[RMDB]
RNA sequence: GGGAACGACUCGAGUAGAGUCGAAAAGAAACACCAACCAUCAUUUCGCAAACCUACAAAUCAAUUCAAUCGCCUGCAACCUCAUUUAACAUAACGAUCAUUGAGCCAGUUCCGCCGCAAUACUCUUGCUUUGGUUUGCUCCCUCGGUAAGUGGCUACUAUGCAUGAGGCUUCGGCCUCAUGCAUAGAAAAGAAACAACAACAACAAC
Reactivity to 2A3 in 0.01 (KOAc 150mM, MgCl2 10mM, bicine 150mM(pH8.5), 24C), signal-to-noise 1, nucleotides 027 to 156: g010a000a140a000c040a040c040c030a030a030c120c000a030u100c020a020u080u150u100c030g060c000a000a020a020c010c010u060a080c050a160a030a010u130c020a000a040u280u090c040a090a180u060c050g000c040c000u000g040c000a010a020c000c010u030c010a020u020u120u120a180a030c150a100u110a170a030c020g140a170u030c040a040u070u130g060a000g020c040c000a020g090u000u060c050c030g020c030c020g040c000a020a000u120a100c040u030c000u120u120g050c000u190u200u090g090g000u070u040u010g020c000u000c010c020c040u000c000g000g000u090a010a010g070u000g040g000c000u030a020